[RMDB]
RNA sequence: GGGAACGACUCGAGUAGAGUCGAAAAUGCCGACCGGCUUAGCCAUGCCUCAUUGCUGGAAGCUGCCAGUUUAAGCCCGUCGCAGCUUCGCCGUUUUGCUCAUAACGAUGUCACUCAUUUGGCGCGAGAGCGUAGCACUGUUCGCAGUGCUACGCUCAAAAGAAACAACAACAACAAC
Reactivity to 2A3 in 0.01 (KOAc 150mM, MgCl2 10mM, bicine 150mM(pH8.5), 24C), signal-to-noise 1, nucleotides 027 to 126: u040g000c000c020g030a020c000c050g000g050c020u060u040a020g020c000c030a030u080g010c000c010u080c050a090u030u150g050c040u070g040g020a000a010g010c020u010g010c020c000a040g000u030u070u080a040a000g020c040c000c010g030u060c080g000c010a000g000c000u040u040c030g000c000c000g010u000u000u050u090g030c010u000c040a090u060a110a010c040g080a040u070g040u020c000a020c060u090c030a050u030u020u120g030g000c040g000c030g040a040
Reactivity to DMS in 0.01 (KOAc 150mM, MgCl2 10mM, bicine 150mM(pH8.5), 24C), signal-to-noise 2, nucleotides 027 to 126: u010g010c010c030g000a100c160c150g010g010c030u020u000a080g010c030c030a070u000g010c020c030u000c050a100u000u000g000c070u000g000g010a060a010g000c020u010g010c000c040a100g000u010u000u000a070a140g000c050c040c060g010u000c130g010c020a020g010c000u000u000c030g010c050c050g000u010u000u000u000g000c040u000c070a100u000a060a080c030g000a080u010g010u010c050a060c060u000c090a080u000u010u000g010g000c040g020c110g000a190
Chemical mapping of a 177-nucleotide RNA with 2A3 and DMS. For 2A3, 1,922 sequencing reads were counted. The DMS profile rests on 1,872 reads. Source: RMDB library OK2TST, as collected in RNAgym. Conditions: 150 mM KOAc, 10 mM MgCl2 and 150 mM bicine (pH 8.5), 24 C. For DMS the reverse transcriptase was MarathonRT.